[RMDB]
Structure probing data (2A3 and DMS) for a 207-nucleotide construct.
The reactions ran in a buffer of 150 mM KOAc, 10 mM MgCl2 and 150 mM bicine (pH 8.5), at 24 C.
2A3 adducts were read by reverse transcription with SuperScript II with manganese.

RNA sequence: GGGAACGACUCGAGUAGAGUCGAAAAUGGGAAAUUAACAAGAUGAUAAGGACAGAGUGAGGAUGGAUAACUAGUAUUCAGUGGCACAAGGGUCAUAAGGGAGGCAGCAGUUGGAGUGGAGAAAGACUGACCUAGGUUGUAUUCUGGCCCAUCAGUAUCGGACGAUAAUAUUCGUAUUAUCGUCCGAAAAAGAAACAACAACAACAAC
Reactivity to 2A3 in 0.01 (KOAc 150mM, MgCl2 10mM, bicine 150mM(pH8.5), 24C), signal-to-noise 2, nucleotides 027 to 156: u040g030g040g030a060a060a080u200u070a100a030c100a150a090g040a120u070g010a060u030a110a060g030g000a000c040a030g050a010g050u050g050a070g050g010a050u040g030g020a010u050a150a090c130u080a060g060u020a130u030u140c040a010g030u070g020g000c020a020c050a120a070g030g000g000u010c050a060u020a120a090g040g000g010a010g000g000c000a020g010c020a000g000u050u080g020g030a070g010u030g000g000a000g030a050a080a010g030a010c040u050g010a030c000c010u020a050g070g000u000u060g050u100a140u060u020c020u010g000g030c030c030c020a080u080c020a040g060u130a040
Reactivity to DMS in 0.01 (KOAc 150mM, MgCl2 10mM, bicine 150mM(pH8.5), 24C), signal-to-noise 1, nucleotides 027 to 156: u010g010g010g010a060a060a070u000u020a050a130c000a070a100g010a130u000g010a070u020a030a140g010g000a030c050a080g020a220g090u040g000a080g020g030a060u000g020g010a040u000a010a090c160u010a120g000u020a060u000u000c080a100g020u000g000g030c030a040c050a100a140g040g040g000u000c050a070u010a020a090g020g030g010a090g000g200c040a020g020c000a050g020u000u020g040g000a040g050u000g010g030a140g000a080a050a100g000a130c040u000g020a030c050c040u000a070g000g000u000u000g040u000a070u010u000c050u000g020g010c000c000c020a140u000c110a140g020u000a050
The DMS profile rests on 1,652 reads.